This 177-nucleotide RNA was probed chemically with DMS.
RNA sequence: GGGAACGACUCGAGUAGAGUCGAAAAAACACAGCAAGGCCCUGUGGCGCAGUUGGUUAGCGCGCCGCCCUGUCACGGCGGAGGUCGCGGGUUCGAGUCCCGUCAGGGUCGCCAGGACGGUGAGGCACUAUCAUCGAGCCUUCGGGCUCGAUGAUAGAAAAGAAACAACAACAACAAC
Reactivity to DMS in 0.01 (KOAc 150mM, MgCl2 10mM, bicine 150mM(pH8.5), 24C), signal-to-noise 1, nucleotides 027 to 126: a070a060c050a090c060a090g010c110a130a060g010g000c010c010c030u000g000u000g000g000c000g020c000a080g010u010u010g010g010u010u000a020g000c030g010c000g000c010c000g010c040c030c110u000g000u010c230a130c260g000g020c000g000g000a020g000g020u000c040g000c000g020g000g010u000u000c010g010a300g000u000c010c000c000g000u010c000a010g000g010g000u000c000g030c060c050a060g010g040a140c110g010g010u000g000a050g010g020c140a200